The record gives the reactivity of an RNA of 177 nucleotides to 2A3 and DMS. For 2A3 the reverse transcriptase was SuperScript II with manganese. The RNA was probed in 150 mM KOAc, 10 mM MgCl2 and 150 mM bicine (pH 8.5) at 24 C.
[RMDB]
RNA sequence: GGGAACGACUCGAGUAGAGUCGAAAAAUUGAAUUAGGAAGCCCAUAGUGACCAAAAAGUUGAUAGUUCAUCAUUCAACACAUAUUUAUUGAGCUCUGUAAUGUCUUAGGCACUAGGCUAGGCAUCAGAGCAGUAAUCAGUUCGCUGAUUACUGCUCAAAAGAAACAACAACAACAAC
Reactivity to 2A3 in 0.01 (KOAc 150mM, MgCl2 10mM, bicine 150mM(pH8.5), 24C), signal-to-noise 1, nucleotides 027 to 126: a010u090u080g060a010a110u070u070a130g110g000a080a030g000c000c010c000a030u020a000g080u050g050a190c040c000a000a000a000a090a180g030u010u030g030a050u070a130g150u040u160c020a110u080c020a020u100u100c020a000a020c030a010c050a090u080a070u210u300u090a090u020u210g060a020g010c030u000c040u060g170u180a000a080u050g080u090c000u040u110a010g020g000c000a030c060u040a070g090g000c000u000a010g030g070c030a080u000c060a070
Reactivity to DMS in 0.01 (KOAc 150mM, MgCl2 10mM, bicine 150mM(pH8.5), 24C), signal-to-noise 2, nucleotides 027 to 126: a080u010u050g000a080a230u000u000a070g010g000a140a140g010c030c010c030a160u000a070g020u010g010a180c040c110a040a110a070a120a050g010u000u020g000a030u010a190g000u000u010c120a030u010c100a120u010u000c030a000a000c040a080c140a100u000a090u010u020u010a100u020u000g000a070g010c020u000c070u000g010u000a070a040u010g020u010c030u010u020a070g020g000c020a090c220u000a080g020g020c040u010a060g000g010c020a020u000c030a080